[RMDB]
Structure probing data (2A3 and DMS) for a 177-nucleotide construct. The RNA was probed in 150 mM KOAc, 10 mM MgCl2 and 150 mM bicine (pH 8.5) at 24 C. The 2A3 profile rests on 4,661 reads. For DMS the reverse transcriptase was MarathonRT.
RNA sequence: GGGAACGACUCGAGUAGAGUCGAAAAAUUGUCGCCUAAAUCUGGUUUACUAGGAUGGGUACCAAAUAGUGACACAUUCCACGUUUUGAUCAGAGAACACCGUGAUGCCAAAAAAAUUCCGUUGAACGUUCUACUCUAGAUUCGUCUAGAGUAGAACAAAAGAAACAACAACAACAAC
Reactivity to 2A3 in 0.01 (KOAc 150mM, MgCl2 10mM, bicine 150mM(pH8.5), 24C), signal-to-noise 4, nucleotides 027 to 126: a000u110u070g010u000c020g020c010c010u060a060a070a070u010c040u030g040g000u060u060u060a070c040u040a060g080g030a050u050g010g010g070u050a090c020c020a120a150a080u180a070g120u170g050a010c000a000c010a110u140u040c030c010a040c060g010u030u040u080u130g040a040u040c030a030g000a020g020a130a010c030a010c030c020g030u040g000a030u070g030c030c020a070a050a000a010a020a020a160u090u020c030c020g030u050u160g060a100a020c020
Reactivity to DMS in 0.01 (KOAc 150mM, MgCl2 10mM, bicine 150mM(pH8.5), 24C), signal-to-noise 4, nucleotides 027 to 126: a090u000u000g030u010c050g030c020c050u000a050a080a110u000c040u000g010g010u000u000u000a060c050u000a190g020g010a050u010g000g000g020u000a070c070c060a060a080a110u010a140g030u010g000a060c060a040c100a060u000u000c010c010a080c200g020u000u000u000u000g010a050u000c050a050g010a070g000a080a070c070a070c120c080g010u010g010a060u000g000c040c040a000a010a040a040a050a050a170u000u000c030c050g000u010u000g020a110a060c190